[RMDB]
RNA sequence: GGGAACGACUCGAGUAGAGUCGAAAAAAACAAGAGGCCCUGCUGCGUUCGUCCAGGGAACAACAGCCACCAUAUUUAGGCAGAUAGCUAACACCUCUAUUCAAUUUACUGCAUACACAGCAUUUAACAAGACAUUCCAUUUCGAUGGAAUGUCUUGAAAAGAAACAACAACAACAAC
Reactivity to DMS in 0.01 (KOAc 150mM, MgCl2 10mM, bicine 150mM(pH8.5), 24C), signal-to-noise 2, nucleotides 027 to 126: a060a050a060c080a100a050g000a090g000g000c030c010c010u020g010c050u000g020c040g000u000u020c050g000u010c100c020a120g000g000g020a060a050c070a080a070c040a090g000c040c040a120c050c050a080u000a100u020u000u000a090g010g030c050a050g000a110u010a060g000c090u000a030a100c150a090c070c030u010c060u000a080u000u000c080a020a060u020u000u000a050c060u000g000c030a080u000a100c140a050c080a030g010c050a080u010u000u000a080a200
Reactivity to 2A3 in 0.01 (KOAc 150mM, MgCl2 10mM, bicine 150mM(pH8.5), 24C), signal-to-noise 1, nucleotides 027 to 126: a000a000a000c090a000a030g030a020g060g000c000c000c000u010g050c060u040g000c020g090u020u100c070g020u000c040c010a040g090g000g050a020a000c070a030a000c000a010g060c000c020a040c000c040a020u090a030u180u150u080a090g010g000c020a020g040a180u080a020g030c000u010a040a020c010a010c020c000u000c020u030a150u060u070c020a050a050u030u130u180a030c000u050g000c000a020u050a140c010a000c000a070g040c040a000u070u100u000a090a030